[RMDB]
RNA sequence: GGGAACGACUCGAGUAGAGUCGAAAAGGGAAACCCAGCAUCUUUUAUAGGAUGUUACUUUUCAGUGAAUACAUAGCUGAUUAGAGGUAGACGCAGAGAACUGAAACAUCUAAGUACCUGCAGGAAGGUGCGUAGUUUUAUUCGUAAAACUACGCACAAAAGAAACAACAACAACAAC
Reactivity to 2A3 in 0.01 (KOAc 150mM, MgCl2 10mM, bicine 150mM(pH8.5), 24C), signal-to-noise 2, nucleotides 027 to 126: g090g000g030a000a060a060c020c010c020a010g000c000a010u000c010u080u090u070u130a190u250a170g030g010a010u000g030u070u030a140c010u090u070u000u010c000a020g010u000g060a030a000u050a120c030a010u080a020g000c010u040g000a040u030u030a030g050a020g070g040u070a030g020a070c070g000c020a000g000a000g030a070a030c020u030g060a130a090a060c030a100u050c030u070a000a050g020u020a060c000c000u030g030c010a020g110g060a090a020g060
Reactivity to DMS in 0.01 (KOAc 150mM, MgCl2 10mM, bicine 150mM(pH8.5), 24C), signal-to-noise 3, nucleotides 027 to 126: g030g010g010a180a120a240c020c020c000a080g000c010a010u000c000u000u000u030u000a150u020a080g000g010a000u000g000u000u000a090c030u000u000u000u020c010a010g020u000g010a170a170u000a140c090a020u000a300g010c030u000g000a010u000u010a050g020a150g010g020u010a100g000a090c140g000c000a010g000a060g010a110a060c060u020g000a120a080a130c190a110u000c020u000a040a050g000u000a100c070c020u010g010c070a160g010g000a070a080g000